[RMDB]
RNA sequence: GGGAACGACUCGAGUAGAGUCGAAAAGAUAUGGACGUAUGAAACGUCGAUAAGCUAUACGUAACAUCUUUCGGAAACGAAAGUGGUAUAGCUUUUGACGACGGAGUAUGUACGUCCUAAGUCGUAACCAGGGUAGUAGUUCGCUACUACCCUGGAAGCUGCUCCUUUAGUUCGCUAAAGGAGCAGCAAAAGAAACAACAACAACAAC
Reactivity to 2A3 in 0.01 (KOAc 150mM, MgCl2 10mM, bicine 150mM(pH8.5), 24C), signal-to-noise 2, nucleotides 027 to 156: g010a000u040a020u160g000g000a000c000g030u010a010u050g020a020a000a020c010g010u000c000g000a040u030a050a000g000c000u000a000u000a000c000g080u090a120a100c060a260u210c010u010u010u000c010g010g050a070a070a070c010g000a000a000a010g010u010g040g000u010a000u000a000g010c000u000u000u020u040g050a020c010g000a000c000g000g000a000g020u010a010u300g000u000a000c000g000u000c000c000u000a010a000g000u000c020g040u040a000a110c000c000a000g010g000g000u000a000g000u000a000g000u000u100c300g000c150u000a000c010u000a000c000c000c000u000g000g010a000a000

Chemical mapping of a 207-nucleotide RNA with 2A3.
2A3 adducts were read by reverse transcription with SuperScript II with manganese.
The reactions ran in a buffer of 150 mM KOAc, 10 mM MgCl2 and 150 mM bicine (pH 8.5), at 24 C.
It was measured as part of the RMDB library RNAMAK.
For 2A3, 2,145 sequencing reads were counted.